[RMDB]
The data come from the RNA Mapping Database (RMDB), library M2RFPK. Chemical mapping of a 207-nucleotide RNA with 2A3 and DMS. For 2A3 the reverse transcriptase was SuperScript II with manganese. Reactivities are rounded to 0.1 and cut off at 0 and 3. For 2A3, 1,210 sequencing reads were counted.

RNA sequence: GGGAACGACUCGAGUAGAGUCGAAAACCCAGUUCCGGGGCCGUUCACUGGAUCCGAAGCCUCUAGAAGGAUAAUAUAGGCACUCCAUACCCUACUCCGUCUCAAUACGUCCCCGUCGUACAGAAUGCAAGGGCAUCCCUGUUCGCAGGGAUGCCAACUAUAAUACACGGUUCGCCGUGUAUUAUAGAAAAGAAACAACAACAACAAC
Reactivity to 2A3 in 0.01 (KOAc 150mM, MgCl2 10mM, bicine 150mM(pH8.5), 24C), signal-to-noise 2, nucleotides 027 to 156: c000c000c000a010g040u090u020c050c000g020g010g000g000c030c000g000u100u090c050a020c090u040g050g000a040u070c030c030g040a070a010g020c030c010u060c010u080a150g060a140a030g220g010a030u040a240a050u130a050u060a060g040g010c020a020c040u060c000c010a050u080a130c010c010c040u030a050c040u040c070c050g080u020c060u010c050a020a100u070a080c000g040u020c000c000c000c000g000u040c010g000u030a050c030a040g140a280a120u100g060c070a050a050g030g000g000c000a000u000c010c000c000u000g030u010u080c230g030c100a020g000g000g040a000u000g000c000c000a000a000
Reactivity to DMS in 0.01 (KOAc 150mM, MgCl2 10mM, bicine 150mM(pH8.5), 24C), signal-to-noise 2, nucleotides 027 to 156: c000c000c010a150g010u020u000c040c020g010g030g030g050c020c010g000u000u010c020a110c050u020g020g000a060u000c030c090g010a060a190g010c040c030u010c040u000a160g000a110a090g020g010a180u010a110a130u000a180u010a080g000g030c030a090c100u000c030c090a240u000a050c070c020c020u000a070c130u010c040c030g010u010c010u000c060a100a110u000a050c050g020u000c010c010c000c000g010u000c090g000u000a190c030a160g000a090a160u000g010c070a110a120g030g010g040c000a020u000c000c010c000u000g020u000u020c250g050c010a050g000g020g010a010u000g020c010c000a010a010